RNA sequence: GGGAACGACUCGAGUAGAGUCGAAAAGAAGUAGUCUUAACCGUGUGGAAAAGAAUGGCUAUAACCACAAAAACCUGAGGAAACAGGAAGACUACUUGCAAGCCAUGUAGAUAGCACACGGAAUAAACAUAUUAUGCCCUUUCGAGGGCAUAAUAUGAAAAGAAACAACAACAACAAC
Reactivity to 2A3 in 0.01 (KOAc 150mM, MgCl2 10mM, bicine 150mM(pH8.5), 24C), signal-to-noise 5, nucleotides 027 to 126: g090a010a010g010u020a000g010u010c030u100u100a110a060c000c010g010u010g000u000g050g100a080a050a050a060g130a050a010u000g000g000c010u010a040u100a250a090c030c040a050c090a060a130a040a040a050c000c000u020g020a060g020g230a130a030a080c010a010g010g000a000a020g000a020c000u000a000c000u030u030g030c030a030a000g010c000c010a010u020g040u040a080g040a170u110a020g040c020a000c010a000c000g000g040a010a010u100a020a050a000
Reactivity to DMS in 0.01 (KOAc 150mM, MgCl2 10mM, bicine 150mM(pH8.5), 24C), signal-to-noise 7, nucleotides 027 to 126: g000a030a020g010u000a010g000u000c010u000u010a140a130c010c010g000u010g000u000g000g010a090a060a130a140g000a080a020u000g000g010c010u000a170u020a090a190c030c020a120c120a050a040a050a060a230c020c000u000g000a120g020g020a080a070a110c000a010g000g020a050a030g010a020c000u000a000c000u010u010g020c140a100a050g010c000c000a010u000g000u020a130g000a110u030a100g000c010a010c000a000c000g000g000a160a050u020a050a070a120